[RMDB]
The record gives the reactivity of an RNA of 177 nucleotides to DMS and 2A3. Conditions: 150 mM KOAc, 10 mM MgCl2 and 150 mM bicine (pH 8.5), 24 C. The DMS profile rests on 1,934 reads.
RNA sequence: GGGAACGACUCGAGUAGAGUCGAAAACAAAGAUGAUUUGGAGGGAAGUGGAUUUUUAUCGAUCACCAAAUUACUUACCCCCAACCAUUAAUAACCAAGAGCCAAUUCCAGAGGAGUGGAGAUAUCCAAGUGUAGGUACAUUCGUGUACCUACACUUAAAAGAAACAACAACAACAAC
Reactivity to DMS in 0.01 (KOAc 150mM, MgCl2 10mM, bicine 150mM(pH8.5), 24C), signal-to-noise 3, nucleotides 027 to 126: c120a100a080a120g000a070u000g020a050u000u010u000g020g030a070g010g000g000a060a030g000u000g030g010a010u000u000u000u010u010a100u030c150g000a060u000c070a120c130c140a040a070a020u000u010a030c010u000u000a210c020c010c010c000c000a020a040c120c010a010u000u010a050a060u010a070a110c060c040a050a060g000a090g000c040c040a030a160u010u000c040c030a080g000a100g000g020a070g050u000g000g000a060g000a060u010a070u010c050c090
Reactivity to 2A3 in 0.01 (KOAc 150mM, MgCl2 10mM, bicine 150mM(pH8.5), 24C), signal-to-noise 2, nucleotides 027 to 126: c030a000a110a050g050a040u030g000a010u050u060u130g070g020a230g010g010g000a000a040g000u070g120g000a100u170u050u030u070u120a220u250c150g040a020u000c040a030c130c070a100a120a020u110u060a040c030u010u120a300c000c000c010c000c010a010a010c030c000a030u070u110a070a130u070a120a060c030c000a000a020g020a020g270c010c010a040a060u110u030c020c010a020g050a040g180g030a020g020u000g020g030a040g010a020u110a060u090c040c000
Background
The data come from the RNA Mapping Database (RMDB), library OK2TRN.